RNA sequence: GGGAACGACUCGAGUAGAGUCGAAAACUUGAAUUGAACUACGGCACUAACCUGUUCGGCAAUGCAGGCAACUAUUACAACCUGUCCUUUUCCAGAUACAUCAACCGGACAAGCUAUUGGAAAGCCGGGAGGAAUCCUUUUUCGAAAGGAUUCCUCCAAAAGAAACAACAACAACAAC
Reactivity to DMS in 0.01 (KOAc 150mM, MgCl2 10mM, bicine 150mM(pH8.5), 24C), signal-to-noise 1, nucleotides 027 to 126: c020u000u000g000a130a070u010u000g080a000a050c140u010a110c000g000g000c000a010c020u000a100a190c110c000u010g000u050u000c030g010g000c150a190a030u020g000c050a010g000g000c210a080a130c140u000a120u010u020a040c240a140a140c010c000u000g000u000c110c020u000u000u000u000c010c080a030g000a010u000a090c130a080u030c120a070a090c000c030g000g000a030c030a020a010g000c150u000a110u020u060g000g000a060a060a090g020c110c080g010
Reactivity to 2A3 in 0.01 (KOAc 150mM, MgCl2 10mM, bicine 150mM(pH8.5), 24C), signal-to-noise 3, nucleotides 027 to 126: c000u010u070g090a090a050u160u130g020a110a080c050u090a070c080g010g000c000a000c100u040a030a120c000c000u010g010u000u000c000g000g000c100a060a040u090g000c000a000g000g000c020a060a030c080u150a100u290u220a020c060a060a050c010c000u050g050u100c000c010u000u110u030u010c020c000a060g030a140u080a140c060a080u170c020a070a220c010c010g030g010a030c000a000a060g020c000u140a070u090u140g050g010a170a050a020g010c000c000g100